[RMDB]
RNA sequence: GGGAACGACUCGAGUAGAGUCGAAAAGAUAUGGACACAUUCCGCACUCUCGAUGAAAUCGGAAACGAUGGAGAGAGUGAACUACGGACCUCGGGUGUCCUAAGUCAAACUCGCGUUCGCGCGAGAACUUAGGCAAAAUCUUCGGAUUUUGCCUAAGAAAAGAAACAACAACAACAAC
Reactivity to 2A3 in 0.01 (KOAc 150mM, MgCl2 10mM, bicine 150mM(pH8.5), 24C), signal-to-noise 2, nucleotides 027 to 126: g020a030u130a030u160g000g000a000c010a000c000a100u080u000c000c010g000c010a000c000u000c000u010c000g300a300u080g000a060a020a010u000c010g010g090a050a100a100c030g010a010u030g000g000a000g000a000g010a000g020u020g010a010a000c020u100a040c000g000g000a020c070c200u200c250g300g080g040u030g000u000c010c010u020a120a020g070u030c050a130a040a070c000u020c000g000c010g030u060u040c300g000c000g000c000g120a000g030a030a060
Reactivity to DMS in 0.01 (KOAc 150mM, MgCl2 10mM, bicine 150mM(pH8.5), 24C), signal-to-noise 2, nucleotides 027 to 126: g000a080u010a300u000g010g020a010c040a000c000a220u000u000c000c050g070c000a000c000u010c050u000c000g010a110u000g000a070a090a010u000c010g000g000a080a050a150c020g010a010u010g000g000a090g000a000g000a040g000u000g000a050a020c160u000a300c020g020g000a040c300c080u010c220g030g010g020u000g020u010c000c000u010a000a020g010u010c080a100a080a190c020u000c000g010c020g020u010u010c220g010c020g000c000g020a040g000a010a150